Chemical mapping of a 177-nucleotide RNA with DMS.
RNA sequence: GGGAACGACUCGAGUAGAGUCGAAAACUGAAUGUUGGUCUGGACUCCCUUCAGAACAUGAGGAACUUGAAUGGAAGACCUGCAACAGAAGGUGGAGGGCUGCUCACAUUCUACAGAGUGGUUUGCAGUCCUGCGUGGAGUUCGCUCCACGCAGGACAAAAGAAACAACAACAACAAC
Reactivity to DMS in 0.01 (KOAc 150mM, MgCl2 10mM, bicine 150mM(pH8.5), 24C), signal-to-noise 1, nucleotides 027 to 126: c080u000g000a150a140u000g010u000u000g010g010u020c050u000g000g020a250c070u020c010c010c040u000u000c120a040g030a100a120c130a130u000g050a120g030g000a180a100c040u000u010g000a000a040u000g020g020a040a040g000a260c000c000u000g010c010a080a060c070a050g000a170a180g010g020u000g010g010a130g030g000g000c010u000g010c000u000c060a060c110a010u000u000c010u000a130c300a050g000a060g000u000g000g000u020u020u050g000c060a050
For DMS the reverse transcriptase was MarathonRT.